[RMDB]
RNA sequence: GGGAACGACUCGAGUAGAGUCGAAAAAUAGAAUGGAAUCAGGCUGGGCGCUGUGGCUCACGCCUGCACUUUGGGAGGCCGAGGCGGGCGGAUUACUUGAGGAUAGGAGUUCCAGACCAGCGUGGCCGGAGCCCGUAUUAUUCGUAAUACGGGCUCCAAAAGAAACAACAACAACAAC
Reactivity to 2A3 in 0.01 (KOAc 150mM, MgCl2 10mM, bicine 150mM(pH8.5), 24C), signal-to-noise 2, nucleotides 027 to 126: a000u150a040g100a070a080u160g060g020a070a080u080c030a030g000g000c000u040g010g010g010c100g000c060u120g040u110g150g000c000u000c000a010c010g000c010c000u000g000c020a150c080u080u090u030g050g010g000a030g030g050c000c000g000a010g030g030c030g010g000g030c000g000g030a050u090u100a050c010u020u050g030a070g070g100a090u140a130g090g020a030g040u140u020c000c010a030g030a070c000c000a010g030c030g010u030g000g000c000c000
Reactivity to DMS in 0.01 (KOAc 150mM, MgCl2 10mM, bicine 150mM(pH8.5), 24C), signal-to-noise 1, nucleotides 027 to 126: a080u020a100g070a170a020u020g010g000a120a050u050c030a000g000g000c010u000g020g000g000c080g000c070u010g010u000g020g080c020u000c020a080c050g000c000c000u000g000c070a100c020u000u000u020g000g000g020a180g000g010c030c030g020a000g000g000c020g010g000g000c060g010g020a210u100u060a060c050u020u020g010a090g000g000a060u000a050g010g020a010g030u000u020c090c010a070g000a090c030c000a000g020c030g020u010g000g010c080c050

This 177-nucleotide RNA was probed chemically with 2A3 and DMS.
Source: RMDB library OK1LIB, as collected in RNAgym.
For DMS, 1,619 sequencing reads were counted.
DMS adducts were read by reverse transcription with MarathonRT.